[RMDB]
RNA sequence: GGGAACGACUCGAGUAGAGUCGAAAAAGGUGAUUUCUCCUGCACCUUUAUCAAUGGAGGAACUCGACUUUGCUGUGGGUCCCAAAGGGACCUUAGGUGCAGACAGUCACCGGCGGUGAAGUGUGAGCAUAGGUUCGUGUCUUCGGACACGAACCAAGAAUAGGUCUCUCUUCGGAGAGACCUAUUCAAAAGAAACAACAACAACAAC
Reactivity to DMS in 0.01 (KOAc 150mM, MgCl2 10mM, bicine 150mM(pH8.5), 24C), signal-to-noise 1, nucleotides 027 to 156: a000g000g000u000g000a300u020u000u000c000u000c040c000u000g010c020a100c010c000u010u000u010a080u020c260a060a100u000g010g000a160g020g030a040a030c040u000c020g020a060c020u000u010u010g000c040u030g000u010g020g010g010u020c010c000c050a100a140a210g090g050g010a010c000c040u000u000a010g010g010u010g000c070a170g050a150c210a130g020u000c000a030c010c000g030g050c050g040g010u010g010a030a040g000u000g010u000g020a080g040c040a060u000a050g050g010u000u010c010g070u000g020u000c010u000u000c300g030g000a040c000a000c020g010a000a000c000c000a030a120
Reactivity to 2A3 in 0.01 (KOAc 150mM, MgCl2 10mM, bicine 150mM(pH8.5), 24C), signal-to-noise 1, nucleotides 027 to 156: a000g020g000u010g000a010u020u020u010c030u030c020c010u120g100c020a010c010c000u090u280u180a040u030c040a020a060u300g000g000a000g000g000a030a040c010u020c030g040a020c010u000u010u000g000c000u000g000u080g060g000g000u020c000c000c010a140a140a110g000g000g000a000c000c020u020u080a020g000g000u010g010c020a030g130a300c080a010g040u160c000a010c010c000g010g010c000g000g000u030g010a020a030g020u080g060u110g080a010g050c080a100u130a150g010g000u000u010c010g000u000g000u000c000u020u030c220g070g010a000c000a000c020g000a000a000c010c010a000a010

The record gives the reactivity of an RNA of 207 nucleotides to DMS and 2A3. Source: RMDB library M2RFPK, as collected in RNAgym. Reactivities are given for positions 27 through 156. 2A3 adducts were read by reverse transcription with SuperScript II with manganese. The DMS profile rests on 2,277 reads. For 2A3, 1,741 sequencing reads were counted.